An RNA of 177 nucleotides, treated with 2A3 and DMS and read out base by base. It was measured as part of the RMDB library OK1LIB. Conditions: 150 mM KOAc, 10 mM MgCl2 and 150 mM bicine (pH 8.5), 24 C. The 2A3 profile rests on 3,852 reads. DMS (dimethyl sulfate) methylates the pairing face of unpaired adenines and cytosines.
RNA sequence: GGGAACGACUCGAGUAGAGUCGAAAACGUCGUGAACUAGCGACAAUGCCAUAGCUCCAUCGUUAUCUAACCGAAACAUCGUGACUAGUCGUAGAAUAGAACCAGGAGAGGUCGCUGGCAAACAAAGGCGGGGUGUCUGAUUCGUCGGACGCCCCGCAAAAGAAACAACAACAACAAC
Reactivity to 2A3 in 0.01 (KOAc 150mM, MgCl2 10mM, bicine 150mM(pH8.5), 24C), signal-to-noise 4, nucleotides 027 to 126: c040g010u020c000g030u040g060a090a020c030u010a080g010c000g020a000c010a040a040u090g040c010c000a040u070a030g020c020u020c010c020a080u050c040g080u040u030a110u060c050u030a050a140c060c010g030a150a050a020c050a100u090c040g060u050g070a090c040u050a030g090u090c030g050u030a040g030a070a070u090a050g050a060a030c010c030a040g000g050a090g020a010g040g040u010c000g000c010u000g000g020c000a030a040a030c040a060a060a010g060
Reactivity to DMS in 0.01 (KOAc 150mM, MgCl2 10mM, bicine 150mM(pH8.5), 24C), signal-to-noise 3, nucleotides 027 to 126: c170g000u020c080g000u000g010a200a240c160u000a030g020c020g000a010c000a100a060u000g030c060c000a010u080a080g040c010u030c000c020a020u000c090g020u000u020a040u020c030u000a040a080c100c060g010a160a030a090c120a050u010c070g000u000g000a080c030u000a070g040u010c010g010u010a030g000a090a040u010a020g000a050a160c130c070a070g030g000a040g010a050g020g000u000c010g090c030u020g000g010c090a040a100a020c070a120a100a080g010